[RMDB]
Background: This 207-nucleotide RNA was probed chemically with 2A3. It was measured as part of the RMDB library VIROID. Conditions: 150 mM KOAc, 10 mM MgCl2 and 150 mM bicine (pH 8.5), 24 C.
RNA sequence: GGGAACGACUCGAGUAGAGUCGAAAAUCCCGCCCCUCGGAUGGGCCGCUUCCGGCGAACGAGCCCGAAGAGCGAGUGGGGGAGAACUCCCGAGAGUUGGGAGACAGAAAGAGGGCGAGUGAUCUCGGAAGGAAUCCCCCAAGCUGCCAACAGAGGAGAGUACUCACAUGUUCGCAUGUGAGUACUCAAAAGAAACAACAACAACAAC
Reactivity to 2A3 in 0.01 (KOAc 150mM, MgCl2 10mM, bicine 150mM(pH8.5), 24C), signal-to-noise 2, nucleotides 027 to 156: u040c010c000c000g020c000c010c000c000u000c030g110g060a130u060g020g000g000c000c000g000c030u100u020c010c040g070g000c060g020a100a100c000g010a100g020c020c020c020g020a070a040g040a030g090c040g000a030g140u100g000g000g000g000g000a000g030a030a040c000u010c000c020c020g000a000g000a000g030u200u160g020g040g010a050g060a020c020a010g300a030a070a000g090a050g000g030g070c070g030a030g030u070g040a050u010c000u000c020g000g040a020a000g000g010a060a040u020c000c010c020c000c000a000a000g000c010u030g040c030c000a050a020c020a140g010a050g000g020a060